[RMDB]
RNA sequence: GGGAACGACUCGAGUAGAGUCGAAAACUGCGCUCCCCUGCUAGAACCUCCAAACAAGCUCUCAAGGUCCAUUUGUAGGAGAACGUAGGGUAGUCAAGCUUCCAAGACUCCAGACACAUCCAAAUGAUCCUGUUCUUUAGUUCGCUAAAGAACAGGAAAAAGAAACAACAACAACAAC
Reactivity to DMS in 0.01 (KOAc 150mM, MgCl2 10mM, bicine 150mM(pH8.5), 24C), signal-to-noise 2, nucleotides 027 to 126: c050u010g010c090g010c060u010c010c000c030c050u000g050c040u020a120g000a190a070c030c030u000c030c030a010a040a120c100a050a030g000c100u000c030u050c130a080a100g010g080u010c080c110a080u000u010u010g000u000a070g010g010a010g000a050a030c260g010u000a060g000g000g000u010a010g030u000c070a130a080g010c010u010u000c040c050a100a080g020a030c050u000c000c050a030g000a110c060a060c060a090u000c030c060a020a100a160u010g000a280

The record gives the reactivity of an RNA of 177 nucleotides to DMS.